[RMDB]
RNA sequence: GGGAACGACUCGAGUAGAGUCGAAAAUUGCUGGGGGGCUCCCAACACCUGGACUUUUGGCACCACGAGGUCAACACCCUGAUUACAAAAGCCUUAGUUGACCCAAAGACUGGCUCAUUGCCCGCCUGCGAGCAGACAAAUUCGUUUGUCUGCUCGCAAAAGAAACAACAACAACAAC
Reactivity to 2A3 in 0.01 (KOAc 150mM, MgCl2 10mM, bicine 150mM(pH8.5), 24C), signal-to-noise 1, nucleotides 027 to 126: u070u130g010c040u010g000g000g000g020g000g000c000u030c040c000c000a020a000c010a030c000c020u010g020g020a030c010u090u070u040u110g030g020c020a020c020c000a010c080g020a060g000g060u060c000a050a000c000a030c010c000c000u020g040a130u180u110a040c090a010a100a080a020g000c030c000u120u120a050g000u030u030g070a070c000c000c000a020a020a020g020a020c000u020g000g040c000u020c030a030u000u140g050c000c000c000g080c000c020u000
Source information
Conditions: 150 mM KOAc, 10 mM MgCl2 and 150 mM bicine (pH 8.5), 24 C. The record gives the reactivity of an RNA of 177 nucleotides to 2A3. 2A3 adducts were read by reverse transcription with SuperScript II with manganese. Source: RMDB library RFM100, as collected in RNAgym.